[RMDB]
RNA sequence: GGGAACGACUCGAGUAGAGUCGAAAAUCUUUGUAGUACAUGGUGGCCUUGAACUUGUACGGGGCGAUGUUCUCCUUGAAGACCACCGCGAUGCCCUCCGUGUAGUUCUGACCCUCGGGCCGGGUCGGGGAAUGGCUAUUUUCGAAUAGCCAUUCCCAAAAGAAACAACAACAACAAC
Reactivity to DMS in 0.01 (KOAc 150mM, MgCl2 10mM, bicine 150mM(pH8.5), 24C), signal-to-noise 1, nucleotides 027 to 126: u000c040u010u010u000g010u010a020g030u020a100c050a060u020g010g020u000g000g000c040c060u000u040g000a090a060c060u000u020g020u030a020c050g000g010g000g020c050g020a020u010g010u030u000c000u000c020c080u020u010g020a090a030g010a050c040c020a070c060c030g000c070g000a180u040g000c000c000c020u000c020c060g000u030g050u000a080g000u010u000c030u000g000a010c020c000c010u020c040g010g000g020c000c070g000g040g030u000c040g010
Reactivity to 2A3 in 0.01 (KOAc 150mM, MgCl2 10mM, bicine 150mM(pH8.5), 24C), signal-to-noise 2, nucleotides 027 to 126: u030c020u010u100u240g040u070a050g040u000a050c020a140u140g000g040u010g040g000c010c020u080u100g050a060a030c030u060u070g050u090a060c050g000g000g010g000c070g090a110u100g050u060u090c010u010c000c050u080u300g070a060a000g020a080c000c010a000c000c010g020c010g030a080u200g040c000c030c010u050c040c020g070u060g040u090a080g020u040u030c020u050g030a030c000c000c010u010c050g000g020g000c010c010g000g000g000u010c000g000
Structure probing data (DMS and 2A3) for a 177-nucleotide construct. For 2A3, 1,092 sequencing reads were counted. The data come from the RNA Mapping Database (RMDB), library OK1LIB. For DMS the reverse transcriptase was MarathonRT.